An RNA of 177 nucleotides, treated with DMS and 2A3 and read out base by base. For DMS the reverse transcriptase was MarathonRT. For DMS, 1,227 sequencing reads were counted. Values cover nucleotides 27 to 126. The reactions ran in a buffer of 150 mM KOAc, 10 mM MgCl2 and 150 mM bicine (pH 8.5), at 24 C.

RNA sequence: GGGAACGACUCGAGUAGAGUCGAAAAGAUAUGGAUUCUCGUAGGUCAACAGCCGUAACAUCUAUCGGAAACGAUAGUGGGACAUGACUCAAGAGAAUCCUAAGUCAAAGGCAUCUUCGGAUGCCAACCAUAAAUGGGCGUUCGCGCCCAUUUAUGGAAAAGAAACAACAACAACAAC
Reactivity to DMS in 0.01 (KOAc 150mM, MgCl2 10mM, bicine 150mM(pH8.5), 24C), signal-to-noise 2, nucleotides 027 to 126: g030a060u000a300u010g000g020a040u000u000c030u000c000g000u020a240g010g000u000c000a050a060c250a130g020c050c070g040u000a060a050c160a020u010c010u000a010u000c020g000g000a120a100a230c000g000a000u000a000g030u010g000g000g000a040c100a220u000g000a000c010u010c050a300a300g000a020g010a020a010u000c000c000u000a030a060g000u000c030a040a090a140g000g040c010a000u000c000u000u000c180g040g010a000u010g010c020c000a020a070
Reactivity to 2A3 in 0.01 (KOAc 150mM, MgCl2 10mM, bicine 150mM(pH8.5), 24C), signal-to-noise 2, nucleotides 027 to 126: g040a020u100a030u090g000g010a020u000u020c050u030c020g020u200a020g000g000u000c030a090a060c050a290g070c000c040g060u050a020a040c010a290u120c000u000a000u000c000g070g010a110a010a040c010g000a000u000a000g000u040g000g030g010a030c040a040u040g000a000c010u040c240a070a010g000a000g000a000a000u030c000c000u000a030a010g030u020c080a130a000a070g010g000c010a010u040c020u100u140c300g130g000a010u000g000c020c000a000a010